[RMDB]
RNA sequence: GGGAACGACUCGAGUAGAGUCGAAAACGCACGAGCUUCGGCUCGUGCGAACGAGGUCGCUACGGCGACCUCGAAACAGGGGAGGUAUGUCUACUCCACGCGCAAGCGAUAGGCCAGUCUCCCUAAAAAAGGAGGAAUACCAAAACCCGCCGGACUCGCGGUGCGGCAGUGUGGAGACCUGUCGCAAUGUGGUGUCGCCAUCCAUGGGCGACCACGAGAUGCAUGGCGCGGAUGCCCCUGCAUCGGAGUCAGAAUGUAUGGCAAAGAGUCGCAGGUUCGCCUGCGACAAAAGAAACAACAACAACAAC
Reactivity to DMS in 0.01 (KOAc 150mM, MgCl2 10mM, bicine 150mM(pH8.5), 24C), signal-to-noise 1, nucleotides 027 to 266: c010g020c000a000c010g060a010g020c010u000u080c220g000g020c000u000c000g020u030g000c020g030a030a030c000g060a020g000g040u000c010g030c000u000a140c130g010g040c010g020a010c010c000u000c020g000a030a100a120c170a090g000g040g000g010a060g000g000u020a090u020g010u000c000u000a020c020u000c030c000a150c020g030c000g000c240a110a130g020c020g020a070u010a030g000g000c040c130a300g010u000c000u000c000c000c000u010a000a020a060a080a020a050g000g020a040g000g000a180a060u010a080c060c040a090a060a100a090c210c010c000g000c000c030g010g000a040c010u010c000g000c020g010g000u000g010c030g000g000c000a000g000u000g030u000g000g020a030g030a150c280c000u020g000u000c010g000c000a050a020u010g010u000g000g000u020g020u010c030g010c000c020a080u000c120c130a050u020g010g010g000c000g010a040c020c030a020c010g000a070g000a010u010g000c010a000u000g010g010c220g010c000g040g020a060u020g010c010c070c000c030u010g000c020a010u030c020g000g000a060g000u000c000a100g030a060a080u000g010u030a040u000g010g030c270a100a120a170g020a270
Reactivity to 2A3 in 0.01 (KOAc 150mM, MgCl2 10mM, bicine 150mM(pH8.5), 24C), signal-to-noise 1, nucleotides 027 to 266: c010g090c000a000c000g000a020g030c030u100u150c300g170g000c000u040c010g010u010g000c000g000a000a000c020g000a000g000g000u000c000g000c000u060a030c300g100g000c000g000a000c020c020u010c010g010a000a000a040c120a040g000g000g000g000a020g000g020u100a120u180g020u040c000u000a050c010u010c020c030a020c010g000c010g010c040a090a120g010c000g040a210u210a060g020g020c010c020a030g020u050c020u030c000c010c020u080a100a100a000a020a020a040g150g040a010g030g080a140a090u170a170c000c050a050a100a020a050c010c010c000g010c020c050g060g020a040c030u010c000g040c040g000g030u060g000c000g000g020c010a040g000u040g000u030g060g000a000g010a070c030c000u000g000u010c000g000c000a000a080u060g010u010g000g100u090g070u030c000g010c000c000a030u100c100c040a180u200g060g010g050c010g000a030c000c030a000c000g070a110g000a000u010g010c000a020u170g010g010c020g050c080g130g090a050u300g020c010c060c000c000u030g000c000a000u000c010g040g010a020g000u010c000a010g100a000a070u170g070u240a050u070g040g110c060a170a070a000g260a090
About this RNA: An RNA of 307 nucleotides, treated with DMS and 2A3 and read out base by base. The 2A3 profile rests on 1,264 reads. 2A3 adducts were read by reverse transcription with SuperScript II with manganese. It was measured as part of the RMDB library POS240.